[RMDB]
This 177-nucleotide RNA was probed chemically with DMS and 2A3. 2A3 adducts were read by reverse transcription with SuperScript II with manganese. The RNA was probed in 150 mM KOAc, 10 mM MgCl2 and 150 mM bicine (pH 8.5) at 24 C. Reactivities are given for positions 27 through 126.
RNA sequence: GGGAACGACUCGAGUAGAGUCGAAAAGAUAUGGACUGUGAACUACUCCAUGAGAAGCCUAUGAAGCCACCCAAGUCGGAAACGACUUGGGUGGUGGAGGCUCUGAUCGGAGCACAGUCCUAAGUCACACAUUAGAAUAGUUCGCUAUUCUAAUGUGAAAAGAAACAACAACAACAAC
Reactivity to DMS in 0.01 (KOAc 150mM, MgCl2 10mM, bicine 150mM(pH8.5), 24C), signal-to-noise 3, nucleotides 027 to 126: g020a040u000a300u010g000g000a010c010u000g000u000g000a110a060c080u020a300c000u010c000c020a040u000g000a260g010a110a110g000c000c010u000a210u020g010a160a300g000c020c000a000c000c010c000a010a020g010u000c000g000g000a100a090a260c010g020a020c000u000u010g000g000g030u000g000g000u000g000g010a030g030g020c000u000c000u000g000a070u000c160g010g010a020g000c000a010c020a000g000u000c010c000u000a010a070g020u000c040a300
Reactivity to 2A3 in 0.01 (KOAc 150mM, MgCl2 10mM, bicine 150mM(pH8.5), 24C), signal-to-noise 2, nucleotides 027 to 126: g020a030u070a050u170g000g000a020c010u020g020u010g060a090a040c090u300a050c000u300c020c000a010u060g040a030g080a190a090g020c020c000u300a300u300g100a090a010g010c000c020a010c000c000c000a000a000g010u040c050g070g000a040a120a150c040g010a000c020u020u000g000g010g040u000g010g000u000g000g000a000g000g020c000u000c000u010g130a010u050c140g010g010a000g000c020a000c000a000g000u020c000c010u000a010a010g000u000c010a010